[RMDB]
RNA sequence: GGGAACGACUCGAGUAGAGUCGAAAAGACAAGAUAUCCUUCUCUCCAACGUUGUUGCCAACUCAUGAUUCUCCUAACCUGUGCUUGGAGAGACGUGGACCCAGAGUCAGAGGACCUCUGACUUCCAAAAACCCGUUUCGGUUCGCCGAAACGGGAAGUGGUUAUAAUUGUUCGCAAUUAUAACCACAAAAGAAACAACAACAACAAC
Reactivity to 2A3 in 0.01 (KOAc 150mM, MgCl2 10mM, bicine 150mM(pH8.5), 24C), signal-to-noise 1, nucleotides 027 to 156: g050a020c050a040a060g020a140u080a100u130c000c030u040u000c000u020c000u000c040c000a020a060c080g000u020u000g000u040u050g060c120c010a070a020c100u080c150a120u090g060a230u140u030c080u250c070c050u070a130a200c010c080u150g040u070g130c070u010u030g000g020a010g010a030g000a030c000g040u040g010g010a010c030c030c040a030g000a000g040u000c000a000g010a010g030g170a020c020c000u000c000u000g000a000c000u030u050c010c000a000a070a080a090a120c000c000c000g000u000u000u000c010g000g050u000u070c180g030c040c000g020a000a000a000c000g010g020g000a000a000
Reactivity to DMS in 0.01 (KOAc 150mM, MgCl2 10mM, bicine 150mM(pH8.5), 24C), signal-to-noise 1, nucleotides 027 to 156: g000a210c130a130a150g010a200u010a100u000c030c020u000u000c000u000c000u000c010c000a060a100c100g000u000u000g000u020u000g000c020c080a060a090c060u010c060a070u000g000a180u000u000c040u000c030c020u000a050a100c030c060u000g000u020g020c100u020u000g010g000a070g020a030g020a050c130g000u000g020g020a130c030c000c040a180g030a040g040u000c020a050g010a070g000g000a150c230c030u000c010u000g000a000c030u000u020c020c010a090a080a100a080a200c000c000c000g030u000u000u010c010g010g020u000u010c300g030c030c020g000a000a010a010c000g010g000g040a010a020
About this RNA: Chemical mapping of a 207-nucleotide RNA with 2A3 and DMS. The data come from the RNA Mapping Database (RMDB), library M2RFPK. 2A3 is a SHAPE reagent: it acylates the 2'-hydroxyl of flexible nucleotides of all four kinds. Reactivities are given for positions 27 through 156. The reactions ran in a buffer of 150 mM KOAc, 10 mM MgCl2 and 150 mM bicine (pH 8.5), at 24 C. For 2A3, 720 sequencing reads were counted.